[RMDB]
Chemical mapping of a 177-nucleotide RNA with 2A3 and DMS. The data come from the RNA Mapping Database (RMDB), library OK1LIB. DMS adducts were read by reverse transcription with MarathonRT. The 2A3 profile rests on 1,124 reads.
RNA sequence: GGGAACGACUCGAGUAGAGUCGAAAAUUACAUAAGUCUAACACCUUGUUUCGGACUAACAAGGGCGCAUGGAGGAUGUCCGGACCUCCAUAGUUAGACGUCCGAGAACCAGCCGAAAUGAAAAAGAAUUUACUGGACCGUUCGCGGUCCAGUAAAUAAAAGAAACAACAACAACAAC
Reactivity to 2A3 in 0.01 (KOAc 150mM, MgCl2 10mM, bicine 150mM(pH8.5), 24C), signal-to-noise 2, nucleotides 027 to 126: u140u100a040c060a050u100a100a050g010u010c030u000a010a010c020a120c040c020u000u000g020u030u020u100c210g070g080a080c020u030a050a000c040a010a020g040g000g000c050g060c020a020u010g000g000a000g080g000a020u060g110u060c040c000g010g010a020c000c000u000c000c000a000u000a030g000u000u020a040g000a030c010g000u020c020c060g070a050g020a080a040c000c000a000g070c010c000g000a030a010a010u160g050a060a080a040a030a030g190a010
Reactivity to DMS in 0.01 (KOAc 150mM, MgCl2 10mM, bicine 150mM(pH8.5), 24C), signal-to-noise 2, nucleotides 027 to 126: u080u020a120c130a060u000a080a080g010u010c050u000a040a000c100a260c040c020u000u000g010u000u000u010c060g000g000a100c040u050a070a080c000a040a070g000g000g010c230g020c080a010u000g000g010a040g020g010a070u060g000u000c040c020g020g000a210c000c000u000c000c000a010u060a050g000u020u020a070g010a050c040g000u010c060c020g000a200g000a050a120c170c060a090g030c010c010g000a050a030a070u020g040a050a080a090a080a140g000a190